[RMDB]
Structure probing data (DMS and 2A3) for a 177-nucleotide construct. Source: RMDB library OK2TRN, as collected in RNAgym. DMS adducts were read by reverse transcription with MarathonRT.
RNA sequence: GGGAACGACUCGAGUAGAGUCGAAAACUUACCGUUAUCGACAACGAUGACCUGGUCGGCCUGAGCGGCAUUCGAAAUCCGUUGUGUAACAACAAUGAUGGUUGCAUCACCAGAUACCUGUCGCAGCGACGGUAUUCAGCUUCGGCUGAAUACCGUCAAAAGAAACAACAACAACAAC
Reactivity to DMS in 0.01 (KOAc 150mM, MgCl2 10mM, bicine 150mM(pH8.5), 24C), signal-to-noise 1, nucleotides 027 to 126: c010u000u030a110c080c090g000u000u000a000u020c030g010a130c280a180a140c030g010a060u000g010a030c040c060u000g000g000u000c000g030g080c030c000u000g030a060g000c030g020g010c020a060u010u000c140g000a040a060a100u000c070c070g010u000u010g000u050g000u010a060a050c100a110a040c030a130a080u000g000a120u010g000g050u000u000g000c080a030u000c080a010c080c010a040g000a050u010a030c080c080u000g000u000c060g030c200a100g100c150
Reactivity to 2A3 in 0.01 (KOAc 150mM, MgCl2 10mM, bicine 150mM(pH8.5), 24C), signal-to-noise 1, nucleotides 027 to 126: c010u030u050a040c030c020g040u020u020a050u100c030g010a000c050a170a130c080g070a100u040g010a030c000c030u080g030g000u020c010g050g000c010c010u020g000a030g000c040g040g010c020a050u170u130c110g080a110a060a030u010c010c030g030u040u030g030u000g000u000a040a020c100a000a000c010a110a080u120g080a050u090g050g070u040u060g000c000a020u100c000a020c030c000a010g030a060u080a060c020c010u040g030u040c020g000c020a030g090c040